[RMDB]
This 207-nucleotide RNA was probed chemically with 2A3.
The data come from the RNA Mapping Database (RMDB), library RSTRND.
The 2A3 profile rests on 421 reads.
The reactions ran in a buffer of 150 mM KOAc, 10 mM MgCl2 and 150 mM bicine (pH 8.5), at 24 C.
2A3 is a SHAPE reagent: it acylates the 2'-hydroxyl of flexible nucleotides of all four kinds.
For 2A3 the reverse transcriptase was SuperScript II with manganese.
RNA sequence: GGGAACGACUCGAGUAGAGUCGAAAACGGAUUCGACAGGCAUUAUGAGGUAUAUUUCGCGACUCAUCGGCAGAUGUAAAAUGCCAGUUAAAUAUAACUGCAAAAAAUACAAAUUCUUACGCAUUAGCUGCCUAAAAAACAGCCUGCGUGAUCUUCACGUGAAAGCGUAGUUCGCUACGCUUUCACGAAAAGAAACAACAACAACAAC
Reactivity to 2A3 in 0.01 (KOAc 150mM, MgCl2 10mM, bicine 150mM(pH8.5), 24C), signal-to-noise 1, nucleotides 027 to 156: c060g050g000a010u000u190c130g040a030c080a020g010g000c010a030u110u110a050u130g060a000g010g090u020a100u010a080u130u170u150c070g000c020g100a050c020u000c020a020u010c020g010g010c010a000g020a030u060g070u110a150a020a000a000u010g040c020c000a000g000u000u100a000a180a040u280a230u020a100a040c000u020g010c000a000a000a000a000a170a170u160a060c100a020a100a000u090u130c050u150u090a010c000g000c020a020u160u000a020g000c000u000g000c020c030u070a050a060a020a020a000a000c010a020g020c000c010u010g020c000g020u000g010a000u000c030u090u060c030a000